[RMDB]
RNA sequence: GGGAACGACUCGAGUAGAGUCGAAAACCAGCGAGAGGCGUGGAGAGAGGGCCGCGGUGCUCUGGAGUAGAGGCUCUGCCUUCGAAACACCAUCGAUCCUCCCUUCUUCUUUACCUUCUUCUGGCUCUUCCGAUGAGACGCGACCGGUGGCAUCGCCGUCUCGGAACCACUUCGGUGGUUCCGAGACAAAAGAAACAACAACAACAAC
Reactivity to 2A3 in 0.01 (KOAc 150mM, MgCl2 10mM, bicine 150mM(pH8.5), 24C), signal-to-noise 2, nucleotides 027 to 156: c000c000a000g030c120g070a000g000a010g040g050c120g020u010g050g000a000g000a010g010a020g000g010g000c040c030g080c010g000g020u000g010c000u010c000u000g000g000a000g020u000a010g000a000g010g010c040u100c250u300g050c020c000u120u170c000g000a000a010a000c020a000c180c000a000u000c000g020a130u080c010c030u070c000c000c000u100u080c000u110u020c020u010u050u040a010c000c000u040u000c000u020u000c010u000g010g000c020u040c010u100u000c030c010g080a180u190g080a030g020a040c070g020c000g070a030c020c040g080g070u110g050g040c030a040u040c030g040c090c040